[RMDB]
RNA sequence: GGGAACGACUCGAGUAGAGUCGAAAAGACUGCGGAGUCCUUGCGCGAGGCCGACGGCACGACGUGGUACUACACCGGCGAUCUGGGCUAUCGCGACGACGACGGCUACCUCUACGUCGUCGACCGCCCUACGGGGGACAUUCGUGUCCCCCGUAGGAAAAGAAACAACAACAACAAC
Reactivity to 2A3 in 0.01 (KOAc 150mM, MgCl2 10mM, bicine 150mM(pH8.5), 24C), signal-to-noise 3, nucleotides 027 to 126: g050a030c090u070g000c010g040g050a030g000u060c010c010u080u100g040c040g000c010g030a040g000g020c020c000g070a130c060g070g010c080a030c100g100a030c080g030u060g040g030u070a170c070u110a040c130a000c030c020g040g000c020g030a110u060c030u140g000g030g030c020u100a140u300c000g000c000g020a000c020g020a000c000g000a010c000g020g030c040u120a120c010c050u020c050u050a030c010g000u000c010g000u000c000g000a050c040c000g000c010
Reactivity to DMS in 0.01 (KOAc 150mM, MgCl2 10mM, bicine 150mM(pH8.5), 24C), signal-to-noise 3, nucleotides 027 to 126: g000a120c050u010g010c050g000g040a140g010u000c030c030u000u010g020c020g030c040g010a050g010g010c030c020g010a160c130g020g010c140a090c050g000a090c100g000u000g030g000u000a070c200u010a150c160a050c020c020g000g000c050g010a090u000c020u010g030g000g000c040u000a080u010c040g010c010g000a100c020g010a000c010g010a010c010g000g000c120u000a120c110c040u000c050u010a050c020g000u000c010g000u000c000g000a070c050c020g010c080
Overview
The data come from the RNA Mapping Database (RMDB), library OK2TRN. Structure probing data (2A3 and DMS) for a 177-nucleotide construct. Values are in units of 0.01, from 0 to 300, in steps of 10. The reactions ran in a buffer of 150 mM KOAc, 10 mM MgCl2 and 150 mM bicine (pH 8.5), at 24 C.